[RMDB]
RNA sequence: GGGAACGACUCGAGUAGAGUCGAAAAAGAUACUUUCACAGUCUAGGAGGGUCUUUAAGGUUGUCACUUGCAACCUUGAUAAGCUCUCUUUUUAGCCAUUGCUAUUUGCUUAGAAACAGAACUGGAAACAUUUUAAACCUUUCGAGGUUUAAAAUGUAAAAGAAACAACAACAACAAC
Reactivity to DMS in 0.01 (KOAc 150mM, MgCl2 10mM, bicine 150mM(pH8.5), 24C), signal-to-noise 5, nucleotides 027 to 126: a060g000a150u020a050c080u010u010u020c060a100c060a050g010u010c050u010a050g020g000a020g000g010g010u010c050u000u010u000a010a000g000g000u000u000g010u010c230a170c300u050u040g000c000a010a010c000c000u000u000g000a030u010a090a150g000c000u000c010u000c000u000u010u020u020u010a030g000c030c220a100u020u010g000c040u020a060u010u000u010g010c020u010u010a090g000a100a080a110c110a050g010a060a040c030u000g010g000a140a070
Reactivity to 2A3 in 0.01 (KOAc 150mM, MgCl2 10mM, bicine 150mM(pH8.5), 24C), signal-to-noise 8, nucleotides 027 to 126: a000g120a020u120a070c010u060u080u070c080a070c020a100g010u000c030u050a030g020g020a000g010g030g020u060c030u000u040u020a010a000g010g010u000u010g070u100c130a110c300u130u290g000c010a000a000c000c000u000u000g020a030u020a080a030g000c000u000c000u000c000u050u010u010u020u040a010g000c010c030a110u050u170g040c030u100a130u180u090u070g010c010u080u090a050g090a050a110a020c080a030g060a070a020c010u020g030g000a040a100
Overview:
An RNA of 177 nucleotides, treated with DMS and 2A3 and read out base by base. The RNA was probed in 150 mM KOAc, 10 mM MgCl2 and 150 mM bicine (pH 8.5) at 24 C. It was measured as part of the RMDB libraries RFM100 and RFMREP.